Record summary:
Chemical mapping of a 177-nucleotide RNA with DMS and 2A3. For 2A3, 49,517 sequencing reads were counted.

[RMDB]
RNA sequence: GGGAACGACUCGAGUAGAGUCGAAAAUAUCGGGCGUACAGGACGCGGCGAAGGCGCGGGCCACAGCCUGGGUCUCGUCGUAGAGAUACGGAAAGGUCCAGCCGUGGCGACGGGCCUCGGCGACCAACUAAUGAUAAUCAUUCGUGAUUAUCAUUAGAAAAGAAACAACAACAACAAC
Reactivity to DMS in 0.01 (KOAc 150mM, MgCl2 10mM, bicine 150mM(pH8.5), 24C), signal-to-noise 9, nucleotides 027 to 126: u010a080u000c060g010g000g020c030g020u000a070c130a100g010g010a120c080g000c020g010g010c020g010a090a050g020g010c010g010c020g000g000g010c000c120a060c140a090g010c100c040u000g000g000g010u000c000u000c210g010u000c010g010u000a020g000a200g000a190u000a010c010g000g000a040a110a050g010g000u000c010c040a090g020c010c020g020u000g000g000c010g000a100c090g010g000g010c000c000u000c040g010g010c020g000a060c030c040a080a200
Reactivity to 2A3 in 0.01 (KOAc 150mM, MgCl2 10mM, bicine 150mM(pH8.5), 24C), signal-to-noise 9, nucleotides 027 to 126: u260a050u080c050g020g060g030c040g020u090a040c040a120g040g110a030c050g010c010g070g040c030g100a120a050g060g000c170g000c010g190g020g000c020c020a080c030a050g020c010c020u020g020g020g010u000c010u000c020g030u000c000g000u010a010g010a000g000a050u040a040c020g010g030a080a080a030g020g000u020c020c020a010g000c010c020g000u010g000g000c050g070a260c070g040g160g000c000c000u000c000g010g010c010g010a030c010c010a020a040
The reactions ran in a buffer of 150 mM KOAc, 10 mM MgCl2 and 150 mM bicine (pH 8.5), at 24 C.
For DMS the reverse transcriptase was MarathonRT.